Conditions: 150 mM KOAc, 10 mM MgCl2 and 150 mM bicine (pH 8.5), 24 C. Structure probing data (2A3 and DMS) for a 177-nucleotide construct. For 2A3, 11,656 sequencing reads were counted. For DMS, 9,705 sequencing reads were counted. Values are in units of 0.01, from 0 to 300, in steps of 10. Source: RMDB library TTRDES, as collected in RNAgym.
RNA sequence: GGGAACGACUCGAGUAGAGUCGAAAAGAUAUGGAUCCACAGGACAUGAGGGCCCUCGGAAACGAGGGUCAGCCUCAACAGCCUGGGAUCCUAAGUCAAAAUCAGGGUGUCUUCGGACACCCUGAAACAAUCCGAUAUAGUUCGCUAUAUCGGAUUGAAAAGAAACAACAACAACAAC
Reactivity to 2A3 in 0.01 (KOAc 150mM, MgCl2 10mM, bicine 150mM(pH8.5), 24C), signal-to-noise 3, nucleotides 027 to 126: g030a010u030a030u100g000g000a000u020c010c030a300c010a300g030g000a050c140a300u300g000a000g000g000g010c000c000c000u000c010g000g030a060a020a000c010g000a010g000g000g000u030c020a000g020c010c000u060c050a240a260c100a100g030c000c000u000g020g000g000a000u000c000c000u000a020a000g010u000c030a060a020a020a300u060c000a000g020g020g000u000g000u000c030u110u280c300g060g010a000c010a000c000c000c000u010g010a000a000a000
Reactivity to DMS in 0.01 (KOAc 150mM, MgCl2 10mM, bicine 150mM(pH8.5), 24C), signal-to-noise 5, nucleotides 027 to 126: g010a050u000a290u010g000g010a010u000c000c000a130c020a010g020g000a060c100a240u000g010a020g000g010g010c000c000c000u000c000g010g000a070a060a120c010g020a000g010g000g010u000c150a010g010c090c030u000c010a100a120c230a190g000c010c010u000g000g000g000a020u000c000c000u000a000a070g010u010c030a100a110a140a170u000c000a010g000g000g010u000g010u000c000u000u010c220g030g000a010c010a000c010c000c000u000g010a010a040a160